[RMDB]
RNA sequence: GGGAACGACUCGAGUAGAGUCGAAAAGAUAUGGACCAUCAUAGCAGCGCCGGUGAAAUACAAUGAGGACUUUAAUCGGAAACGAUUAAAGUCCUCAUUGGAGCUGACUAUGAGUGGUCCUAAGUCACAUAUACCGUCCGUUCGCGGACGGUAUAUGAAAAGAAACAACAACAACAAC
Reactivity to DMS in 0.01 (KOAc 150mM, MgCl2 10mM, bicine 150mM(pH8.5), 24C), signal-to-noise 1, nucleotides 027 to 126: g030a090u010a300u040g010g020a020c000c010a100u000c000a010u000a000g030c000a030g000c010g060c100c180g010g070u020g000a100a170a220u010a150c140a080a020u030g000a020g020g010a050c000u000u000u000a020a010u000c000g000g010a140a100a220c010g010a000u010u000a000a030a000g020u010c000c000u010c000a020u000u000g000g010a060g050c000u010g000a130c020u000a010u000g010a040g010u000g030g000u000c000c000u000a000a080g010u000c030a210